RNA sequence: GGGAACGACUCGAGUAGAGUCGAAAAGAUAUGGACCUCAUACAGCUUUUGACGUCGUUUAGUUCGGAAACGAACUAACGACGAUAAGCUGUGAGGUCCUAAGUCAAAACUCACCUUCGGGUGAGAACACCCAACUAGGGUUCGCCCUAGUUGGGUGAAAAGAAACAACAACAACAAC
Reactivity to 2A3 in 0.01 (KOAc 150mM, MgCl2 10mM, bicine 150mM(pH8.5), 24C), signal-to-noise 2, nucleotides 027 to 126: g030a010u050a050u110g000g030a010c000c000u040c050a130u210a300c020a040g060c000u090u220u300u300g300a200c090g050u000c020g050u070u110u300a000g000u000u030c020g000g050a030a050a020c010g010a000a020c010u000a000a000c000g000a010c000g000a000u010a000a000g000c000u000g000u010g000a020g020g020u010c000c000u030a000a000g020u010c010a010a000a000a180c010u010c000a000c000c000u080u090c300g130g000g000u020g010a000g000a000a010
Reactivity to DMS in 0.01 (KOAc 150mM, MgCl2 10mM, bicine 150mM(pH8.5), 24C), signal-to-noise 2, nucleotides 027 to 126: g000a060u000a300u000g000g000a020c000c000u000c000a130u020a300c050a000g000c000u000u000u020u060g030a270c110g020u000c000g000u010u000u000a000g010u000u000c000g010g000a130a140a120c000g020a050a000c000u000a000a000c000g030a030c000g010a030u000a000a020g000c000u010g010u000g020a030g020g000u000c000c000u000a020a090g010u010c010a080a090a100a170c020u000c000a000c010c000u000u000c300g010g000g000u000g020a010g020a070a130